[RMDB]
RNA sequence: GGGAACGACUCGAGUAGAGUCGAAAAGAUAUGGACGACGAAGAACAUGAUGCCGAGGAUCUCGGAAACGAGGGAGGCAAUAUGGGAGUCGUCCUAAGUCAAAGGAGUGCGGUUCGCCGCACUCCAAGAUACAGCCAGAGUUCGCUCUGGCUGUAUCAAAAGAAACAACAACAACAAC
Reactivity to 2A3 in 0.01 (KOAc 150mM, MgCl2 10mM, bicine 150mM(pH8.5), 24C), signal-to-noise 2, nucleotides 027 to 126: g030a010u080a060u170g000g000a010c010g010a000c020g200a300a110g080a180a020c010a010u040g030a040u070g110c000c000g060a210g060g000a010u030c000u000c000g010g030a100a040a030c010g000a010g000g000g000a000g030g030c010a000a030u090a000u000g020g000g010a060g010u010c010g000u010c000c000u010a010a000g020u010c030a070a000a040g010g000a010g000u000g000c080g060g080u040u150c300g040c130c000g000c010a010c000u000c000c000a000a010
Reactivity to DMS in 0.01 (KOAc 150mM, MgCl2 10mM, bicine 150mM(pH8.5), 24C), signal-to-noise 2, nucleotides 027 to 126: g010a020u000a300u000g010g000a040c010g010a030c000g000a160a180g020a120a200c010a010u000g010a080u000g010c000c000g020a080g040g000a030u000c000u000c000g000g020a110a080a130c020g000a020g020g000g010a030g030g010c000a020a030u000a000u000g000g000g020a150g020u000c000g020u000c000c020u000a010a070g000u000c020a090a200a110g010g000a050g010u000g010c000g010g000u010u000c300g030c010c000g000c000a000c000u010c000c000a000a020
The record gives the reactivity of an RNA of 177 nucleotides to 2A3 and DMS. The DMS profile rests on 1,871 reads. For 2A3, 3,300 sequencing reads were counted. Values cover nucleotides 27 to 126. The reactions ran in a buffer of 150 mM KOAc, 10 mM MgCl2 and 150 mM bicine (pH 8.5), at 24 C.